[RMDB]
Annotation: Chemical mapping of a 177-nucleotide RNA with 2A3 and DMS.

RNA sequence: GGGAACGACUCGAGUAGAGUCGAAAAGAUAUGGAGAUGGCCGAUAAGACUUGGAUCGGAAACGAUCCAACGGUCUUUUGACGGGCAUCUCCUAAGUCAAAGCCGUAGACGUUCGCGUCUACGGCAAGGACAAUUAAGUCUUCGGACUUAAUUGUCCAAAAGAAACAACAACAACAAC
Reactivity to 2A3 in 0.01 (KOAc 150mM, MgCl2 10mM, bicine 150mM(pH8.5), 24C), signal-to-noise 2, nucleotides 027 to 126: g000a010u020a010u080g000g020a000g000a000u020g080g250c010c010g020a100u140a300a050g010a000c020u040u020g000g010a020u000c000g010g000a020a030a000c000g000a000u000c000c000a010a020c040g040g010u020c000u020u130u070u060g040a000c010g000g020g070c010a000u000c000u000c000c000u000a020a000g000u010c010a060a140a030g000c010c000g010u000a020g000a000c000g010u050u070c300g010c010g130u000c000u010a020c000g000g000c000a010a000
Reactivity to DMS in 0.01 (KOAc 150mM, MgCl2 10mM, bicine 150mM(pH8.5), 24C), signal-to-noise 3, nucleotides 027 to 126: g000a010u000a120u020g000g000a010g030a010u000g000g000c000c000g010a080u010a030a020g020a010c010u000u000g000g000a000u000c010g010g000a040a020a050c000g020a000u000c000c000a010a040c300g000g000u000c000u000u000u010u020g010a300c030g010g000g000c010a010u000c000u000c000c000u000a000a030g000u010c020a070a110a160g000c010c000g010u000a000g010a010c010g030u000u010c270g030c010g010u000c000u000a000c000g000g010c010a000a010
It was measured as part of the RMDB library TTRDEL. For DMS, 2,662 sequencing reads were counted.